[RMDB]
RNA sequence: GGGAACGACUCGAGUAGAGUCGAAAAGUGCUUCAGCCGGGUGAAUCCACCACGAAGGACCAACGCGCUUUCGAGCGCGAGCAUGCCGAUGACUGGAUCGUCAUCUCGGCGAUCACGUCGCAGCACGAGGAUCCCUCGAUUUCGAUCGAGGGAUCCUAAAAGAAACAACAACAACAAC
Reactivity to 2A3 in 0.01 (KOAc 150mM, MgCl2 10mM, bicine 150mM(pH8.5), 24C), signal-to-noise 1, nucleotides 027 to 126: g080u110g000c090u100u030c000a040g000c010c000g050g000g010u020g020a050a040u000c000c020a000c000c010a050c120g210a180a170g020g020a080c060c000a140a030c000g000c000g000c000u170u150u090c210g150a010g000c000g000c000g060a000g000c000a050u170g010c090c000g050a030u050g010a040c060u010g040g000a050u000c020g160u010c000a070u050c110u010c080g000g000c020g020a050u020c000a080c210g020u000c000g000c060a050g000c000a000c090g090